[RMDB]
RNA sequence: GGGAACGACUCGAGUAGAGUCGAAAAUAUGCUGUCCUGUGGGAAGAGGACAUCUGCGAAGUGCUUGAAAAGGGUGAUGAAAGAAUGCUUUUGAUUCCUAUGUGCGGUGAACUGCUUCUUGAAGGAGACGUAUGCCUAAUUUCGAUUAGGCAUACGUAAAAGAAACAACAACAACAAC
Reactivity to DMS in 0.01 (KOAc 150mM, MgCl2 10mM, bicine 150mM(pH8.5), 24C), signal-to-noise 5, nucleotides 027 to 126: u010a050u010g020c050u010g010u010c010c000u000g010u020g000g010g020a080a050g020a060g010g010a050c030a040u010c040u040g020c070g010a080a070g010u020g020c010u020u000g000a050a090a070a070g010g000g010u010g000a060u040g010a080a070a090g000a100a060u010g010c020u010u000u000u010g000a130u000u010c000c020u010a060u030g020u010g020c050g010g000u000g000a060a100c070u000g010c040u000u000c010u020u000g020a110a090g000g000a070g010
Reactivity to 2A3 in 0.01 (KOAc 150mM, MgCl2 10mM, bicine 150mM(pH8.5), 24C), signal-to-noise 9, nucleotides 027 to 126: u280a060u120g040c040u040g020u030c000c000u040g030u160g070g040g030a060a050g020a040g040g010a010c010a040u010c040u050g010c020g070a080a020g060u060g080c040u070u120g070a050a050a060a040g050g020g010u080g020a100u090g040a040a030a030g080a080a060u120g040c010u040u070u040u080g100a090u070u080c000c010u060a110u140g080u050g020c030g020g000u040g020a050a040c020u070g010c010u050u020c000u010u090g090a070a030g060g040a060g010